Conditions: 150 mM KOAc, 10 mM MgCl2 and 150 mM bicine (pH 8.5), 24 C. Chemical mapping of a 207-nucleotide RNA with 2A3 and DMS. For 2A3, 3,402 sequencing reads were counted. 2A3 adducts were read by reverse transcription with SuperScript II with manganese.
[RMDB]
RNA sequence: GGGAACGACUCGAGUAGAGUCGAAAACUAGCGGGUUCGCCCGCUAGAAAAAAACCUUUGUGCGUUACACAUAGCUUGGAUUUAAGAUGCCCAUUGGGCAUCUUUGUCAGCUGGGUGUGCGCACUCUGGUAAAAACGCUCUGUUUCGACAGAGCGAAUCAAUGUGUACACUUCGGUGUACACAUUGAAAAAGAAACAACAACAACAAC
Reactivity to 2A3 in 0.01 (KOAc 150mM, MgCl2 10mM, bicine 150mM(pH8.5), 24C), signal-to-noise 4, nucleotides 027 to 156: c010u000a000g000c010g000g050g040u030u050c250g110c010c000c000g000c010u010a010g010a000a000a000a000a000a000a000c020c000u040u000u020g000u000g000c000g020u060u300a010c000a000c010a020u010a010g020c010u070u240g130g000a090u240u300u070a010a000g010a010u010g010c000c060c170a300u220u300g010g000g000c020a000u020c000u020u000u000g000u000c000a000g000c000u030g030g010g000u010g010u000g000c000g000c000a000c000u000c000u000g000g000u070a110a080a010a020a000c010g000c000u000c000u010g020u030u130u100c220g060a020c010a000g000a000g000c000g000a000a050
Reactivity to DMS in 0.01 (KOAc 150mM, MgCl2 10mM, bicine 150mM(pH8.5), 24C), signal-to-noise 1, nucleotides 027 to 156: c000u000a010g010c010g010g020g070u000u010c300g050c030c010c000g000c010u000a010g010a010a000a060a050a080a100a040c000c000u000u000u000g000u000g010c030g000u010u020a070c000a050c040a070u000a010g000c010u020u000g070g000a010u010u000u000a010a000g000a010u010g010c000c000c000a300u000u000g090g030g000c000a000u000c010u010u020u010g000u000c000a020g000c020u000g010g060g070u000g030u000g000c000g040c000a000c010u000c020u000g050g010u000a020a060a090a140a130c010g010c010u000c000u000g000u000u000u000c280g000a210c000a000g040a010g020c000g000a000a040